Chemical mapping of a 177-nucleotide RNA with DMS and 2A3. DMS adducts were read by reverse transcription with MarathonRT.

RNA sequence: GGGAACGACUCGAGUAGAGUCGAAAAGAUAUGGAGGGAGUUUAGAACUACGCUUAACUGGUCGGAAACGACCAGGGAGGCGCUAAACGAAGAACUCCUAAGUCAAAGAACGUCUUCGGACGUUCAAUCCAAAUUUAGAGUUCGCUCUAAAUUUGGAAAAAGAAACAACAACAACAAC
Reactivity to DMS in 0.01 (KOAc 150mM, MgCl2 10mM, bicine 150mM(pH8.5), 24C), signal-to-noise 4, nucleotides 027 to 126: g010a040u000a280u020g000g000a070g020g010g020a100g020u000u000u000a020g000a140a060c130u020a300c020g000c000u010u000a180a180c000u000g000g010u000c000g030g000a080a100a180c000g010a010c010c000a010g000g000g010a080g000g000c010g020c000u000a010a050a060c020g000a120a110g000a100a130c010u000c010c000u010a030a130g010u000c030a140a130a120g000a010a000c000g010u000c000u000u010c240g010g010a010c000g000u010u000c000a100a110
Reactivity to 2A3 in 0.01 (KOAc 150mM, MgCl2 10mM, bicine 150mM(pH8.5), 24C), signal-to-noise 2, nucleotides 027 to 126: g010a000u110a040u120g000g020a020g030g000g020a100g030u010u000u020a010g000a090a040c150u220a050c300g000c000u040u020a030a000c000u010g000g000u000c010g000g010a050a050a050c010g000a010c000c000a000g010g000g000a010g030g000c010g000c010u000a010a000a000c000g140a170a050g000a040a020c000u000c000c000u010a120a020g020u000c050a050a020a250g010a020a000c000g000u000c000u030u110c300g150g000a000c000g000u010u000c000a000a010